[RMDB]
RNA sequence: GGGAACGACUCGAGUAGAGUCGAAAAUGCACUGUCGUUUGUUCCGAUUCUAGCUCCCGUAUCAUCAAUCCUAUUGAAUAUGGGUGUUUCGAUGGCACUAGGCGGUGUCGUUCAAAUGCUAUCUGCUCAGCCAAGAGGGCUUGGGGCCAAGGACAGUGUGGGGGAGUAAGUUCGCUUACUCCCCCACAAAAGAAACAACAACAACAAC
Reactivity to 2A3 in 0.01 (KOAc 150mM, MgCl2 10mM, bicine 150mM(pH8.5), 24C), signal-to-noise 1, nucleotides 027 to 156: u130g000c000a000c000u000g030u030c050g300u000u020u100g000u010u000c000c000g030a140u110u010c040u100a000g040c030u040c020c000c000g000u000a000u040c080a000u000c000a100a160u180c080c130u300a260u110u060g040a020a000u060a000u040g000g000g000u030g010u010u030u040c030g000a040u050g000g000c020a000c090u040a090g030g080c020g110g000u140g050u060c050g040u070u150c050a000a030a070u090g040c040u090a040u040c000u000g080c010u000c060a040g110c090c020a200a060g050a140g040g030g020c030u060u000g130g000g000g000c020c010a030a040g050g000a000c010a030g060u080